RNA sequence: GGGAACGACUCGAGUAGAGUCGAAAAUCCCUGAAUGGAAAAGAGGGAGGAACUCUCGCUGGUUGGCGAGGGCCGGGGUAUGGUCAGCUUCGGCAAAUUAUUAACUUGGAUGCAGAGACCACAUCCUAGAAACAAACUUGGUGAUUCGUCACCAAGAACCUAAGGUCAAGUUCGCUUGACCUUAGGUAAAAGAAACAACAACAACAAC
Reactivity to DMS in 0.01 (KOAc 150mM, MgCl2 10mM, bicine 150mM(pH8.5), 24C), signal-to-noise 2, nucleotides 027 to 156: u000c010c000c000u030g010a080a150u030g020g000a110a070a140a120g010a120g040g010g000a130g000g010a090a070c030u000c010u000c010g030c020u000g010g000u010u000g020g020c050g030a020g050g000g080c020c020g010g000g000g020u000a010u000g000g000u000c010a300g010c050u000u030c020g010g000c010a090a090a110u000u000a170u010u020a060a050c080u000u000g000g000a060u000g000c030a110g020a300g000a130c020c030a120c040a030u000c040c000u000a070g000a170a050a210c070a110a050a190c030u000u010g050g030u000g010a100u000u000c230g090u000c010a030c010c000a010a000g010a120
Reactivity to 2A3 in 0.01 (KOAc 150mM, MgCl2 10mM, bicine 150mM(pH8.5), 24C), signal-to-noise 5, nucleotides 027 to 156: u030c010c000c020u040g070a120a080u110g010g080a030a030a030a050g060a050g020g040g000a050g030g020a050a050c010u010c000u030c060g010c040u050g110g190u170u270g020g000c010g010a010g010g010g000c000c000g020g000g000g010u250a050u100g010g000u030c010a010g000c000u010u020c020g000g000c030a030a050a090u230u200a070u090u130a140a080c050u070u070g000g000a000u000g010c070a020g080a030g010a260c000c010a000c000a010u000c010c000u020a020g100a060a050a020c060a020a070a030c030u010u010g020g000u000g010a010u010u060c170g040u010c060a000c000c000a000a010g000a000